[RMDB]
RNA sequence: GGGAACGACUCGAGUAGAGUCGAAAACGAUCUGUUCGCAGAUCGAGCUACGGAGACGUAGCAAAGCGCGCUAGGGCCCGGGAGCGCGUCCUACCGGAAAUAAAAACAUAUAGACGUGUGCUACGAUCUGUCCGGGCCCAAAGAAACAGCACACGAACCAUUACCAUUACUUCGGUAAUGGUAAUGGAAAAGAAACAACAACAACAAC
Reactivity to 2A3 in 0.01 (KOAc 150mM, MgCl2 10mM, bicine 150mM(pH8.5), 24C), signal-to-noise 3, nucleotides 027 to 156: c010g010a000u000c000u010g040u120u090c210g030c080a000g010a000u010c020g000a040g000c000u000a000c000g030g000a090g030a090c000g000u020a000g000c000a020a030a030g000c020g000c010g000c010u020a020g010g010g000c000c000c000g000g020g000a010g000c010g020c010g000u030c020c000u030a110c000c030g090g180a050a090a070u300a070a110a040a050a020c070a040u250a020u050a120g180a140c010g000u000g000u000g000c000u040a040c090g100a080u000c010u030g010u010c000c020g020g070g000c010c000c020a080a110a000g040a010a100a010c030a000g000c000a000c000a010c010g000a010a010
Chemical mapping of a 207-nucleotide RNA with 2A3. Conditions: 150 mM KOAc, 10 mM MgCl2 and 150 mM bicine (pH 8.5), 24 C.